[RMDB]
RNA sequence: GGGAACGACUCGAGUAGAGUCGAAAAAUUCGCCCUGUGUCGCGCGACCGACAGCACUCACAGCCCCGCAUAUCCCACCCUGGAGCUCAAUCUGGCCCAACAGCCGCUUUUGCGGGUCCAGAGGGCAAUUAAGCACUCGAUUCGUCGAGUGCUUAAUAAAAGAAACAACAACAACAAC
Reactivity to DMS in 0.01 (KOAc 150mM, MgCl2 10mM, bicine 150mM(pH8.5), 24C), signal-to-noise 5, nucleotides 027 to 126: a070u010u010c100g020c000c010c040u040g020u000g010u010c070g000c110g000c060g000a090c040c020g010a080c120a070g000c120a050c080u020c060a080c070a070g000c020c030c030c050g000c050a080u010a090u040c040c020c010a190c060c060c040u010g000g020a090g000c010u020c040a080a070u000c040u010g000g010c020c000c010a100a210c220a110g000c040c020g000c050u010u010u010u030g000c100g010g000g010u030c040c020a020g000a230g000g000g010c030a130
Reactivity to 2A3 in 0.01 (KOAc 150mM, MgCl2 10mM, bicine 150mM(pH8.5), 24C), signal-to-noise 4, nucleotides 027 to 126: a000u120u070c080g060c010c010c020u050g040u010g030u100c020g000c010g000c040g090a090c010c030g050a020c010a030g030c040a030c020u030c010a050c010a050g020c010c000c000c020g030c020a050u070a060u120c010c010c010a050c030c030c000u040g020g040a030g010c010u000c030a050a120u020c060u020g050g000c000c030c000a070a050c020a030g060c020c020g050c070u110u120u180u300g030c040g010g020g010u030c000c020a010g010a050g030g000g000c020a000